The record gives the reactivity of an RNA of 177 nucleotides to 2A3 and DMS.
The RNA was probed in 150 mM KOAc, 10 mM MgCl2 and 150 mM bicine (pH 8.5) at 24 C.
RNA sequence: GGGAACGACUCGAGUAGAGUCGAAAAUGGAUUCAACGCCGGGAAGCUUACCGGGAUCGACAGUUGUAUGAAGGCCAGGCUGAAGACCUUGCCGGACUAGCUGAGAGGAGGUGCAUGGCCGUCGUCACCCUGACUUCUGAUUCGUCAGAAGUCAGGGAAAAGAAACAACAACAACAAC
Reactivity to 2A3 in 0.01 (KOAc 150mM, MgCl2 10mM, bicine 150mM(pH8.5), 24C), signal-to-noise 3, nucleotides 027 to 126: u080g040g060a020u070u080c040a020a080c090g010c040c010g020g000g030a070a050g000c030u040u050a050c030c000g000g040g020a070u070c060g040a030c030a070g010u020u000g120u140a120u050g080a050a000g010g000c000c000a000g000g000c030u120g110a150a000g010a090c000c000u020u000g040c000c000g000g010a020c030u040a030g040c030u030g000a030g010a010g190g050a020g000g000u060g010c000a050u080g040g000c000c020g010u010c030g040u010c020a020
Reactivity to DMS in 0.01 (KOAc 150mM, MgCl2 10mM, bicine 150mM(pH8.5), 24C), signal-to-noise 3, nucleotides 027 to 126: u000g010g000a080u020u030c030a090a070c130g000c020c000g000g000g000a150a140g010c170u010u050a090c030c090g000g000g030a070u000c060g000a110c050a050g030u010u010g000u000a050u040g040a230a060g000g020c000c110a020g010g000c010u020g000a180a120g000a100c020c000u000u000g020c020c020g010g000a190c080u010a040g000c010u000g000a260g010a060g000g010a110g000g000u010g000c020a130u000g010g000c010c010g000u000c040g000u030c140a160

Values cover nucleotides 27 to 126.